[RMDB]
RNA sequence: GGGAACGACUCGAGUAGAGUCGAAAAGAUAUGGACGCAAAUGGGAUGCAAUAACGCAGAUACGAAGAUCGGAAACGAUCUUCGAGUAGUUAUUGAACUACAUCCCAUUGCGUCCUAAGUCAAAAGACGAUCUGCCAGUUCGCUGGCAGAUCGUCAAGUCAUCACAGCAGUUCGCUGCUGUGAUGACAAAAGAAACAACAACAACAAC
Reactivity to 2A3 in 0.01 (KOAc 150mM, MgCl2 10mM, bicine 150mM(pH8.5), 24C), signal-to-noise 2, nucleotides 027 to 156: g010a000u010a000u060g000g000a010c000g010c030a010a110a300u030g020g000g000a010u010g060c020a000a000u030a000a010c270g180c300a020g000a000u010a000c000g010a000a000g000a010u000c000g030g000a000a010a000c000g010a000u000c020u000u000c010g000a000g000u010a010g000u010u000a000u020u020g000a020a000c000u140a050c050a000u000c000c000c000a000u000u000g000c000g020u010c000c000u000a000a000g000u000c000a000a000a010a030g010a000c000g000a000u010c000u000g000c000c010a020g000u150u160c270g110c160u000g000g000c000a000g000a000u000c000g000u000c000a000a000
About this RNA:
The data come from the RNA Mapping Database (RMDB), library RNAMAK. An RNA of 207 nucleotides, treated with 2A3 and read out base by base. The RNA was probed in 150 mM KOAc, 10 mM MgCl2 and 150 mM bicine (pH 8.5) at 24 C.